RNA sequence: GGGAACGACUCGAGUAGAGUCGAAAACAUCAAACUGGUCGACUUAGUUUCGAACAUGAUGAUAUAAUCGUGGUAGAGACUAAGUCUACUUUUUGGUACAAAACACAUAAGACCAGAUAGACUAUCAGUGUACCAAAAAUAGGGGGAUAACUCCAUACGAGGGUUUGGACUUCGGUUCGGAUCUUCGAAAAGAAACAACAACAACAAC
Reactivity to 2A3 in 0.01 (KOAc 150mM, MgCl2 10mM, bicine 150mM(pH8.5), 24C), signal-to-noise 3, nucleotides 027 to 156: c010a070u110c020a020a010a060c010u020g000g000u010c030g000a000c000u000u000a000g010u000u010u000c010g030a060a020c000a000u000g000a000u000g050a010u030a040u090a220a010u020c000g000u000g000g010u050a010g000a000g000a000c000u000a000a000g000u000c000u000a000c000u000u010u010u000u000g000g000u000a000c010a020a110a060a020c080a020c000a040u090a110a030g000a020c000c010a000g010a030u080a020g070a040c010u040a050u120c060a040g060u000g000u030a000c000c000a000a000a000a000a020u090a020g000g000g000g000g000a000u050a060a040c010u000c010c000a010u040a030
Reactivity to DMS in 0.01 (KOAc 150mM, MgCl2 10mM, bicine 150mM(pH8.5), 24C), signal-to-noise 3, nucleotides 027 to 156: c080a100u000c050a040a150a170c040u010g020g020u000c030g010a030c010u000u000a020g020u000u000u000c000g000a060a240c000a020u000g010a000u000g010a220u000a120u000a080a030u010c010g060u010g000g000u010a190g000a050g010a000c010u000a010a020g010u000c000u010a010c020u000u000u000u000u000g010g080u000a040c020a060a070a100a140c100a160c090a100u010a090a100g010a050c010c010a030g010a150u010a060g010a130c060u000a120u000c070a110g000u010g000u000a020c000c000a010a030a030a080a130u010a120g000g000g020g050g000a170u000a050a120c020u000c000c010a040u000a130